[RMDB]
RNA sequence: GGGAACGACUCGAGUAGAGUCGAAAAUCGGAAUGUCUGCGAGUGGUCUAGGAUCCAGCUUCGUGUAUCCCUCAUACUCCUCCUUAGGGUUCUAGGGUGUCUUUAAUCUCCUCCCUCAUGCCCUCCCCAAACUCUUUGGAGUGUCUCACUGAUGUAAAAAUACCACUCACUUCGGUGAGUGGUAUUUAAAAGAAACAACAACAACAAC
Reactivity to DMS in 0.01 (KOAc 150mM, MgCl2 10mM, bicine 150mM(pH8.5), 24C), signal-to-noise 1, nucleotides 027 to 156: u000c080g010g000a160a060u010g000u020c040u000g000c060g010a080g030u010g020g010u000c060u000a100g020g020a080u010c030c010a100g020c090u010u000c040g060u000g000u010a090u010c020c010c010u000c020a150u000a080c030u020c030c000u000c010c020u000u000a070g030g030g000u010u010c090u010a080g010g030g030u000g010u000c050u010u000u000a130a120u000c020u000c040c020u010c000c000c020u000c050a070u000g000c020c010c030u020c010c000c010c040a120a070a100c060u000c010u000u000u000g020g000a110g020u000g010u000c050u020c050a080c060u000g040a120u030g030u000a030a130

An RNA of 207 nucleotides, treated with DMS and read out base by base. DMS adducts were read by reverse transcription with MarathonRT.